[RMDB]
RNA sequence: GGGAACGACUCGAGUAGAGUCGAAAAGAUAUGGAUCCUCUCCUGGGACUGAUGACCCACGCUCGGAAACGAGCGUGGCAAGGUCCUGGGAGAGGGAUCCUAAGUCAAAGUACUGUUCGCAGUACAACUGAAAUAUACAGUUCGCUGUAUAUUUCAGAAAAGAAACAACAACAACAAC
Reactivity to DMS in 0.01 (KOAc 150mM, MgCl2 10mM, bicine 150mM(pH8.5), 24C), signal-to-noise 4, nucleotides 027 to 126: g000a090u010a300u000g010g010a010u000c000c000u000c000u000c000c000u010g010g000g010a010c000u000g010a080u020g000a110c300c000c010a000c000g040c000u000c000g010g030a120a110a270c010g030a020g020c000g030u000g000g000c010a040a080g000g000u000c010c000u000g000g010g000a000g000a000g020g000g000a010u000c000c010u010a050a110g010u010c070a120a160a170g000u000a020c000u010g010u000u010c190g020c010a020g010u000a010c010a100a190